RNA sequence: GGGAACGACUCGAGUAGAGUCGAAAAGUGAGCUGUGAUGAGAAAGCUAACACGUAAGAAGGGGUACUCCUUUGUGGGGUGUUUCUUCAAUGAAAUACAUUUGUUACGCUUGGCUUCUGAGCUAAAACAGUUUGCUACUCUUCGGAGUAGCAAACUGAAAAGAAACAACAACAACAAC
Reactivity to 2A3 in 0.01 (KOAc 150mM, MgCl2 10mM, bicine 150mM(pH8.5), 24C), signal-to-noise 3, nucleotides 027 to 126: g190u180g070a030g000c020u000g000u030g110a090u110g010a040g090a050a040a000g010c000u020a000a000c010a000c080g020u010a170a000g010a000a000g000g020g000g020u020a000c000u010c110c000u100u240u300g140u220g090g030g000g000u010g040u010u000u000c010u000u020c000a000a050u130g030a060a000a040u230a050c040a170u150u230u090g020u040u000a060c100g000c000u000u000g080g000c000u060u030c000u100g050a030g030c000u060a000a000a000a180
Reactivity to DMS in 0.01 (KOAc 150mM, MgCl2 10mM, bicine 150mM(pH8.5), 24C), signal-to-noise 1, nucleotides 027 to 126: g010u010g000a030g060c020u000g020u000g000a020u030g010a040g050a280a080a000g010c020u000a030a010c040a110c300g000u010a020a050g000a030a020g000g000g010g050u000a060c000u000c010c000u000u040u040g000u100g040g000g000g050u050g000u000u000u000c000u000u000c010a030a060u060g010a040a080a030u000a080c070a140u040u040u020g020u000u000a000c050g010c020u000u000g000g000c020u000u000c000u000g000a040g020c010u010a020a110a250a030

Structure probing data (2A3 and DMS) for a 177-nucleotide construct. For DMS, 1,547 sequencing reads were counted. It was measured as part of the RMDB library RFM100. For DMS the reverse transcriptase was MarathonRT. For 2A3 the reverse transcriptase was SuperScript II with manganese.